This 177-nucleotide RNA was probed chemically with 2A3 and DMS. For DMS the reverse transcriptase was MarathonRT. 2A3 adducts were read by reverse transcription with SuperScript II with manganese. The reactions ran in a buffer of 150 mM KOAc, 10 mM MgCl2 and 150 mM bicine (pH 8.5), at 24 C. Source: RMDB library OK2TRN, as collected in RNAgym.
RNA sequence: GGGAACGACUCGAGUAGAGUCGAAAAUUCGCCAACCCGCCCGACCACUCGGCUCCGCUUGGCGUGACCAGGCCCAGCGCCCCGCCGCUGCCUCACGUCGUAGACCUACCACAGCUGGGGCCGCGCCGCAGCGGAUAGAGUUCGCUCUAUCCGCUGCAAAAGAAACAACAACAACAAC
Reactivity to 2A3 in 0.01 (KOAc 150mM, MgCl2 10mM, bicine 150mM(pH8.5), 24C), signal-to-noise 1, nucleotides 027 to 126: u040u020c010g030c010c020a040a050c000c010c020g050c000c030c010g030a030c030c050a020c060u060c040g020g020c020u020c010c000g000c040u050u080g020g030c030g020u010g030a060c010c090a010g030g000c000c060c070a010g010c010g040c040c040c020c040g140c110c000g000c000u010g000c000c000u000c010a030c020g020u030c010g010u040a050g110a160c040c070u060a060c030c030a040c010a060g000c040u160g020g000g010g000c000c020g010c010g010c000c070
Reactivity to DMS in 0.01 (KOAc 150mM, MgCl2 10mM, bicine 150mM(pH8.5), 24C), signal-to-noise 3, nucleotides 027 to 126: u000u000c040g020c030c040a070a080c010c020c030g010c030c030c030g020a110c080c060a100c070u000c030g010g000c020u000c020c040g020c070u000u000g010g010c020g020u000g000a120c110c070a060g020g000c040c080c060a070g000c030g020c040c010c040c060g020c180c030g000c030u000g020c020c020u000c070a060c140g010u000c040g020u010a080g020a110c050c050u000a110c080c130a050c060a080g010c040u000g030g000g010g000c020c020g030c110g020c110c100